[RMDB]
The record gives the reactivity of an RNA of 177 nucleotides to DMS and 2A3.

RNA sequence: GGGAACGACUCGAGUAGAGUCGAAAAAGGUACGUUUUGGAAGGUGUUCUAAGUCAGUUGGAAUUCUGCACAAGUUAGGACAACAAAUGUGAUCUUGCUUGUAUCUCAGCAGUAUGAGAAACGGACCUCAAUUUACCUCGUUCGCGAGGUAAAUUGAAAAAGAAACAACAACAACAAC
Reactivity to DMS in 0.01 (KOAc 150mM, MgCl2 10mM, bicine 150mM(pH8.5), 24C), signal-to-noise 3, nucleotides 027 to 126: a030g000g000u000a030c020g000u000u000u010u010g010g040a120a150g010g010u000g010u010u000c030u010a020a100g000u010c150a070g000u000u000g040g020a080a050u000u000c010u000g000c110a050c010a010a010g010u000u010a040g010g000a040c100a050a170c120a090a090a160u010g020u000g010a110u000c010u010u000g030c020u000u010g020u000a100u010c150u000c100a040g020c080a080g000u000a050u000g000a130g000a010a010a010c020g000g000a020c020c040
Reactivity to 2A3 in 0.01 (KOAc 150mM, MgCl2 10mM, bicine 150mM(pH8.5), 24C), signal-to-noise 3, nucleotides 027 to 126: a000g010g000u030a020c000g000u020u010u060u060g140g030a070a060g080g050u090g000u120u000c010u040a050a060g080u180c080a120g030u050u040g050g010a040a100u060u000c010u020g020c050a020c000a050a000g040u120u160a010g060g010a010c000a090a020c020a060a300a100u270g040u080g040a140u010c000u030u000g030c010u000u000g050u060a090u050c070u020c040a010g000c020a020g070u150a050u150g080a050g030a000a010a010c020g000g010a010c010c000
For 2A3, 2,764 sequencing reads were counted. Values are in units of 0.01, from 0 to 300, in steps of 10. For DMS the reverse transcriptase was MarathonRT. The reactions ran in a buffer of 150 mM KOAc, 10 mM MgCl2 and 150 mM bicine (pH 8.5), at 24 C.